[RMDB]
The data come from the RNA Mapping Database (RMDB), library M2RFPK. The record gives the reactivity of an RNA of 207 nucleotides to 2A3 and DMS. The DMS profile rests on 3,443 reads. For 2A3, 1,071 sequencing reads were counted. For DMS the reverse transcriptase was MarathonRT. For 2A3 the reverse transcriptase was SuperScript II with manganese.

RNA sequence: GGGAACGACUCGAGUAGAGUCGAAAAGCUAUUGUUGGAAUCACCGUACCUAUUUAGGUUUACGCUCCAAGAUCGGUGGAUAGCAGCCCUAUCAAUAUCUAGGAGAACUGUGCUAUGUUUAGAGGAUUAAAUCGACGCAUCUUCGGAUGCGUCGAAACAUCUCCAUAAGGUUCGCCUUAUGGAGAUGAAAAGAAACAACAACAACAAC
Reactivity to 2A3 in 0.01 (KOAc 150mM, MgCl2 10mM, bicine 150mM(pH8.5), 24C), signal-to-noise 3, nucleotides 027 to 156: g010c010u020a010u050u110g150u100u190g110g100a130a080u180c010a020c030c000g030u030a020c000c000u040a160u160u300u260a040g010g000u070u070u010a030c030g000c020u020c000c010a050a020g030a070u030c010g000g000u000g000g070a010u020a010g040c010a030g030c030c000c000u070a080u130c070a110a030u030a010u190c040u010a000g020g010a000g010a060a100c100u090g010u040g080c030u070a020u160g070u020u120u070a100g010a080g060g050a050u110u150a100a070a170u030c010g010a000c010g010c000a000u010c020u010u030c070g000g020a000u000g010c010g000u010c000g000a000a000a000
Reactivity to DMS in 0.01 (KOAc 150mM, MgCl2 10mM, bicine 150mM(pH8.5), 24C), signal-to-noise 2, nucleotides 027 to 156: g050c010u000a030u010u020g000u000u000g010g010a150a130u000c000a020c050c010g030u000a070c030c010u000a190u000u000u000a040g010g000u000u010u000a040c080g030c040u000c000c020a060a120g000a050u000c070g040g010u000g020g010a060u000a020g030c010a250g010c060c080c010u000a140u000c050a080a110u000a090u000c080u010a140g000g020a090g020a070a060c060u000g000u000g020c020u000a070u000g000u000u010u000a090g010a150g000g000a180u000u000a050a060a130u000c000g030a050c000g050c010a010u000c010u000u000c300g030g030a020u010g020c000g000u000c000g000a000a030a070